[RMDB]
RNA sequence: GGGAACGACUCGAGUAGAGUCGAAAAUAGACGAUAUCAACAACGUUUCCAAGGAGGCUGCCUCUGGUGAGAGUACUACCCACCAAAAAACUGAGGCCUCUGCUUCUCUUGAAAGCAGUGCCGUCACGGGCUCAUAGGCUUUCGAGCCUAUGAGCCCAAAAGAAACAACAACAACAAC
Reactivity to 2A3 in 0.01 (KOAc 150mM, MgCl2 10mM, bicine 150mM(pH8.5), 24C), signal-to-noise 1, nucleotides 027 to 126: u180a000g040a000c010g100a040u090a030u300c070a030a010c000a000a000c030g070u000u000u010c040c040a000a010g050g020a010g000g000c040u100g000c000c000u040c030u090g010g020u000g010a300g000a040g110u070a070c060u050a080c020c000c000a000c030c020a010a020a030a010a030a030c000u000g010a010g000g010c020c030u010c070u060g000c020u000u000c050u000c000u000u000g250a050a000a000g000c000a000g000u040g060c000c000g060u040c000a050c190
An RNA of 177 nucleotides, treated with 2A3 and read out base by base.
Conditions: 150 mM KOAc, 10 mM MgCl2 and 150 mM bicine (pH 8.5), 24 C.
The data come from the RNA Mapping Database (RMDB), library OK1LIB.
Values are in units of 0.01, from 0 to 300, in steps of 10.
High 2A3 reactivity points to a flexible backbone, as in loops and unpaired stretches.